This 170-nucleotide RNA was probed chemically with 2A3 and DMS. The RNA was probed in 150 mM KOAc, 10 mM MgCl2 and 150 mM bicine (pH 8.5) at 24 C. The data come from the RNA Mapping Database (RMDB), library 15KLIB. DMS adducts were read by reverse transcription with MarathonRT. 2A3 adducts were read by reverse transcription with SuperScript II with manganese.
RNA sequence: GGGAACGACUCGAGUAGAGUCGAAAAAUUUCUGUUACAUGCAUCAAAUGGAACUUGCUAAUGGUACACAUACCGGUUCAGCAUUUGAUGGUACUAUGUAUGGUGCCUUUAUGGAUAAACAAGUGCAAAGGGCGUGGGUUCGCCCACGCCAAAAGAAACAACAACAACAAC
Reactivity to 2A3 in 0.01 (KOAc 150mM, MgCl2 10mM, bicine 150mM(pH8.5), 24C), signal-to-noise 1, nucleotides 027 to 129: a000u000u000u000c000u100g110u070u030a000c000a000u010g000c000a000u000c000a020a000a000u000g070g040a030a010c000u000u110g050c020u110a140a070u080g000g030u050a040c150a070c010a090u030a000c000c000g020g000u000u000c020a070g050c010a090u000u000u060g000a000u000g000g000u000a030c000u060a030u000g040u000a030u060g070g010u040g000c000c000u060u020u000a170u160g030g000a000u000a000a100a040c010a000a000g040u000g150c000a000a030a000g040
Reactivity to DMS in 0.01 (KOAc 150mM, MgCl2 10mM, bicine 150mM(pH8.5), 24C), signal-to-noise 2, nucleotides 027 to 129: a140u000u010u000c030u000g000u000u000a130c030a090u030g000c040a040u000c000a000a140a000u030g000g000a000a000c000u010u010g050c130u010a000a080u030g040g070u000a000c210a090c160a030u000a030c140c080g010g020u040u000c000a070g030c060a030u000u000u050g010a020u040g000g020u000a130c150u000a070u040g000u000a070u050g060g130u030g000c050c000u000u100u110a020u030g000g000a130u140a080a170a060c080a000a050g000u020g070c030a110a100a040g000